[RMDB]
RNA sequence: GGGAACGACUCGAGUAGAGUCGAAAAAGGCCGAAGCAAAGAUAUUAGUGAGAUCAAGCUGAAGAUGGUUGCAGACUGGCUCAAACUUGCACAUACUCCUGGGAAAGGGAAAGUGAUUGACUGUAUCACACCUGGUUAACUUCGGUUAACCAGGUGUAAAAGAAACAACAACAACAAC
Reactivity to DMS in 0.01 (KOAc 150mM, MgCl2 10mM, bicine 150mM(pH8.5), 24C), signal-to-noise 2, nucleotides 027 to 126: a130g000g030c010c010g020a090a090g000c070a070a070a150g000a060u010a040u000u010a110g010u020g010a070g020a090u000c060a090a110g000c050u000g010a070a090g000a090u010g000g020u010u010g020c040a090g010a090c070u000g010g000c050u010c030a030a060a070c040u000u000g030c070a050c130a070u010a070c110u000c030c000u010g020g000g010a080a070a040g000g000g010a060a070a070g020u000g010a080u010u000g010a120c100u010g010u000a040u000c070
Reactivity to 2A3 in 0.01 (KOAc 150mM, MgCl2 10mM, bicine 150mM(pH8.5), 24C), signal-to-noise 1, nucleotides 027 to 126: a000g040g000c010c020g080a030a000g030c060a010a090a080g080a050u080a050u050u100a170g100u090g070a080g000a060u080c020a050a000g030c000u030g060a020a020g040a020u100g080g010u020u070g010c030a010g050a130c080u050g030g000c000u050c050a030a030a020c040u080u140g000c040a000c010a040u140a080c050u020c000c020u050g100g000g000a100a070a120g020g000g040a050a060a000g040u000g040a010u000u080g060a060c070u080g050u080a020u100c110